This 207-nucleotide RNA was probed chemically with DMS and 2A3.
For 2A3 the reverse transcriptase was SuperScript II with manganese.
Conditions: 150 mM KOAc, 10 mM MgCl2 and 150 mM bicine (pH 8.5), 24 C.
The data come from the RNA Mapping Database (RMDB), library OK3TST.
The DMS profile rests on 1,986 reads.

RNA sequence: GGGAACGACUCGAGUAGAGUCGAAAAUCUUCUUUGGUGACCACCGGGUUUGAAUCUGAUGCCGGUUUAUCAUUCACCACAUCUGCAGAAUCCGACGAAAUAAUCUCUUUCUCCAUCAACUUAGCUUCCUCGCUCACCUUAUUCUCCAAUGGCUGCAGCAGGUAUUACUAUUCGUAGUAAUACCUGCAAAAGAAACAACAACAACAAC
Reactivity to DMS in 0.01 (KOAc 150mM, MgCl2 10mM, bicine 150mM(pH8.5), 24C), signal-to-noise 1, nucleotides 027 to 156: u010c040u010u010c060u000u000u000g020g010u010g000a110c140c030a140c030c030g020g010g000u030u000u000g010a150a130u010c110u030g030a090u010g020c050c030g000g030u000u010u020a070u020c100a150u010u010c030a230c000c030a030c070a070u000c060u020g000c040a190g010a120a070u000c000c020g020a090c050g020a120a060a100u010a080a120u000c030u020c030u010u010u010c000u010c050c040a120u000c020a040a090c050u010u020a080g000c020u000u020c020c020u000c060g020c020u010c080a050c050c030u000u000a140u000u000c030u020c020c040a110a130u020g030g000c030u000g040c070a230
Reactivity to 2A3 in 0.01 (KOAc 150mM, MgCl2 10mM, bicine 150mM(pH8.5), 24C), signal-to-noise 2, nucleotides 027 to 156: u000c010u100u040c000u060u060u060g000g010u020g020a020c040c000a010c030c030g000g060g000u080u070u140g130a110a070u100c080u070g040a050u090g150c080c070g070g000u000u040u080a060u060c050a030u050u170c000a010c030c000a000c010a040u010c030u040g040c020a010g030a100a040u020c040c030g050a030c050g070a070a050a060u120a050a070u050c040u000c000u030u060u020c030u000c020c010a080u060c030a020a100c040u030u030a010g020c000u030u030c030c010u000c030g020c020u030c020a060c020c010u050u040a070u120u040c040u030c030c010a060a060u090g050g000c030u100g040c030a010